[RMDB]
RNA sequence: GGGAACGACUCGAGUAGAGUCGAAAACUGAUCAGGACUCUGCCUGUCAUUGCUGUUCUCUGACUUCAGAUGAGGUCACAAUCUGCCCCUGGCUUAUGCAGGGAGUGAGGCGUGGUCCCCGGGUGUCCCUGUCACGUGCAGGGUGAGUGAGGCGUUAAUAUUAUCCAGGUUUCGACCUGGAUAAUAUAAAAGAAACAACAACAACAAC
Reactivity to 2A3 in 0.01 (KOAc 150mM, MgCl2 10mM, bicine 150mM(pH8.5), 24C), signal-to-noise 2, nucleotides 027 to 156: c060u040g000a090u150c070a080g030g040a040c020u010c020u120g000c000c000u040g080u110c020a080u020u170g090c050u030g040u040u040c020u020c000u000g050a080c030u040u040c040a140g030a300u130g030a080g020g000u010c010a020c010a020a100u000c040u110g010c020c000c000c010u020g040g040c050u250u150a080u300g020c020a010g000g010g020a020g020u050g050a050g000g070c040g020u050g000g030u100c000c050c000c000g110g030g000u040g020u030c000c000c000u020g020u040c060a070c210g030u070g040c020a000g030g010g060u050g000a060g010u070g010a010g000g040c020g050u040u110a040
Reactivity to DMS in 0.01 (KOAc 150mM, MgCl2 10mM, bicine 150mM(pH8.5), 24C), signal-to-noise 2, nucleotides 027 to 156: c040u000g010a070u020c060a130g020g010a110c050u020c090u000g010c030c020u020g040u020c040a160u010u000g000c000u020g040u000u000c060u000c040u000g000a060c020u000u000c040a190g020a170u000g020a080g010g010u000c020a020c050a090a260u010c070u000g000c020c010c000c010u000g030g040c060u000u000a100u010g050c040a070g030g010g000a080g010u000g000a090g020g000c210g020u010g020g010u000c040c010c010c000g060g010g000u000g000u000c010c020c010u000g020u000c040a100c170g040u010g010c040a050g040g000g030u000g000a060g010u000g010a050g040g020c030g010u000u010a070